Structure probing data (DMS and 2A3) for a 177-nucleotide construct. DMS adducts were read by reverse transcription with MarathonRT. It was measured as part of the RMDB library OK1LIB.
[RMDB]
RNA sequence: GGGAACGACUCGAGUAGAGUCGAAAAUUUUUGAUAUUGAUGUCAUUAUAACACUGUCUUAAAUUUCCAUGAAAAAUAGUCUUAAGACGAUGAGUCAUGAUAAUUCUGUUCCAAUUGACGUAAAGCGUACAAAUAUCGUGUUCGCACGAUAUUUGUAAAAAGAAACAACAACAACAAC
Reactivity to DMS in 0.01 (KOAc 150mM, MgCl2 10mM, bicine 150mM(pH8.5), 24C), signal-to-noise 5, nucleotides 027 to 126: u000u000u010u010u010g000a000u010a030u040u030g010a150u000g010u000c100a070u050u030a100u050a130a050c060a030c010u000g000u000c000u010u010a010a010a010u000u000u010c080c030a080u030g000a010a050a070a050a080u010a080g000u000c030u020u000a060a090g010a020c020g010a110u010g010a190g010u000c040a050u010g010a040u010a010a300u010u010c040u000g000u010u000c030c020a030a110u020u010g000a080c130g010u020a030a040a120g010c150g000
Reactivity to 2A3 in 0.01 (KOAc 150mM, MgCl2 10mM, bicine 150mM(pH8.5), 24C), signal-to-noise 6, nucleotides 027 to 126: u050u040u010u010u030g050a030u030a070u150u190g110a150u040g050u040c030a040u060u270a110u060a220a030c040a010c030u040g030u000c000u010u020a030a060a090u070u070u000c070c010a040u180g060a020a020a040a000a040u090a050g040u030c040u080u070a120a110g010a030c030g050a060u140g020a010g020u010c010a020u040g030a020u040a100a060u140u040c020u050g070u030u030c010c000a120a190u110u060g060a040c010g050u110a070a060a110g080c020g020
High DMS reactivity at an A or C suggests that its Watson-Crick edge is free.